RNA sequence: GGGAACGACUCGAGUAGAGUCGAAAAGGGGCUGACAUGGUUUCGACUACGUUGAUUGAGCCAGGGGAAGCGUGCCGGUGAAGGCUGGAGACCACCGUGAGCGUCGCAGCAAACCAAUAAGCGCCGAGAAGACUCAGCGCGACUACGCCCUCGCUGCCAGUAUGUAACAGUUCGCUGUUACAUACUGAAAAGAAACAACAACAACAAC
Reactivity to 2A3 in 0.01 (KOAc 150mM, MgCl2 10mM, bicine 150mM(pH8.5), 24C), signal-to-noise 6, nucleotides 027 to 156: g040g000g000g000c030u050g040a050c050a100u090g040g040u030u100u120c040g020a040c030u100a040c070g070u060u070g070a180u030u070g020a010g040c040c040a050g000g000g010g000a060a000g040c050g040u040g030c020c000g000g020u040g040a060a030g060g000c050u070g050g020a050g030a050c010c010a020c010c030g070u070g040a040g020c010g040u050c040g000c010a020g000c000a040a030a040c020c010a030a030u120a200a020g000c000g010c010c030g010a010g010a200a060g040a130c020u020c030a000g000c010g010c010g020a020c030u080a020c060g020c010c010c010u000c050g010c010u020g030c010
Reactivity to DMS in 0.01 (KOAc 150mM, MgCl2 10mM, bicine 150mM(pH8.5), 24C), signal-to-noise 3, nucleotides 027 to 156: g000g010g020g040c030u000g020a150c080a110u000g000g000u000u020u000c030g020a100c030u000a060c050g000u000u010g000a140u000u000g010a080g030c020c040a140g000g000g000g000a080a090g020c030g000u000g010c020c020g010g010u000g000a100a080g020g020c030u000g030g000a130g010a100c070c010a060c030c040g000u000g010a070g020c060g010u000c060g000c030a070g070c010a060a050a080c060c040a050a100u000a090a170g010c020g030c010c020g010a080g020a090a170g000a280c020u000c010a030g010c020g000c000g000a080c060u000a120c040g010c020c010c020u000c050g000c010u000g000c060